[RMDB]
RNA sequence: GGGAACGACUCGAGUAGAGUCGAAAAAACGAUCCGAGGGAACUAUUCCUCUCGAGAAUCGGCAAAUGGGGCCCCUCGCUCGUAUCUCCGAGAGGAGACGAGAAAGAGGAGGAUCUCCCUUUGCCAUACCGACCGGAGUUCGCUCCGGUCAAAAGAAACAACAACAACAAC
Reactivity to DMS in 0.01 (KOAc 150mM, MgCl2 10mM, bicine 150mM(pH8.5), 24C), signal-to-noise 5, nucleotides 027 to 129: a070a090c100g010a000u030c010c010g000a000g000g010g010a030a180c300u050a130u010u000c090c020u060c020u010c000g010a110g040a080a020u020c040g000g030c000a010a020a020u070g020g010g000g020c050c020c020c090u020c030g020c020u030c010g030u060a140u040c000u020c010c010g020a240g000a210g030g000a010g000a030c000g010a010g030a030a060a000g040a000g000g000a100g000g010a150u070c000u000c020c000c020u000u030u030g060c000c010a020u070a040c070c080
Reactivity to 2A3 in 0.01 (KOAc 150mM, MgCl2 10mM, bicine 150mM(pH8.5), 24C), signal-to-noise 8, nucleotides 027 to 129: a000a020c090g000a000u000c010c020g000a000g020g010g000a040a020c050u090a280u170u110c020c010u110c010u000c010g150a160g050a130a100u060c050g010g000c000a000a020a050u180g000g000g000g000c000c000c000c000u000c020g030c000u000c010g070u090a130u040c000u000c000c010g030a040g000a030g080g000a000g000a000c010g000a000g000a070a180a010g020a000g030g040a130g020g010a060u080c040u060c020c000c000u000u000u000g000c010c000a000u060a040c010c040
This 170-nucleotide RNA was probed chemically with DMS and 2A3. Values are in units of 0.01, from 0 to 300, in steps of 10. The RNA was probed in 150 mM KOAc, 10 mM MgCl2 and 150 mM bicine (pH 8.5) at 24 C. Values cover nucleotides 27 to 129. DMS adducts were read by reverse transcription with MarathonRT.